The record gives the reactivity of an RNA of 207 nucleotides to 2A3.
It was measured as part of the RMDB library OK3TST.
The reactions ran in a buffer of 150 mM KOAc, 10 mM MgCl2 and 150 mM bicine (pH 8.5), at 24 C.

RNA sequence: GGGAACGACUCGAGUAGAGUCGAAAAGAGGAAAGGGUACAGUUUGUUGACGCUUUACUACAACAACCUAAAUUUAAAGGUAAGGUUAAGUUUAUUUCUAUUGAUGGUAUAGCUGAUCUUGUAGAAAAUACUAAUGAUAUACUAAUGAGUGCUGCUAUACUCAAGUCGGUUUCGACCGACUUGAGUAAAAAGAAACAACAACAACAAC
Reactivity to 2A3 in 0.01 (KOAc 150mM, MgCl2 10mM, bicine 150mM(pH8.5), 24C), signal-to-noise 1, nucleotides 027 to 156: g060a000g050g000a060a090a000g030g010g040u140a100c060a080g000u070u000u030g000u000u120g080a040c050g040c000u040u140u090a010c040u050a090c000a170a010c020a020a020c070c010u060a090a110a280u300u300u150a030a300a010g000g000u000a000a000g000g000u000u040a010a020g030u080u070u160a070u040u200u000c070u050a070u030u060g040a030u040g020g000u040a040u020a070g020c030u000g040a040u030c000u000u090g000u020a010g060a060a170a020a000u050a040c070u140a130a010u030g010a040u050a040u020a080c020u060a120a060u080g000a000g060u040g040c040u020g030c000u040a020